[RMDB]
RNA sequence: GGGAACGACUCGAGUAGAGUCGAAAAGAUAUGGAUGCUACCCACCAGGACCAGUCGACGAAGGAGUUUUAGGCUCGGAAACGAGCCUAAAACUCCAGAGACUGGAGAACCUGAGGCAUCCUAAGUCGUUAUUAGUUCACUUCGGUGAACUAAUAACAAAAGAAACAACAACAACAAC
Reactivity to DMS in 0.01 (KOAc 150mM, MgCl2 10mM, bicine 150mM(pH8.5), 24C), signal-to-noise 1, nucleotides 027 to 126: g000a200u010a150u010g000g000a010u000g010c000u010a110c030c020c070a300c240c000a000g000g020a160c000c000a020g000u000c010g000a220c300g020a150a070g010g000a050g020u000u080u000u000a000g000g020c000u000c000g010g000a120a060a260c020g020a020g000c000c010u010a000a000a020a020c000u000c020c000a000g020a080g000a010c000u020g000g000a080g000a160a060c000c000u000g010a110g000g000c010a000u000c010c000u010a060a110g010u020c130
An RNA of 177 nucleotides, treated with DMS and read out base by base.
Conditions: 150 mM KOAc, 10 mM MgCl2 and 150 mM bicine (pH 8.5), 24 C.
The data come from the RNA Mapping Database (RMDB), library TTRINS.
The DMS profile rests on 701 reads.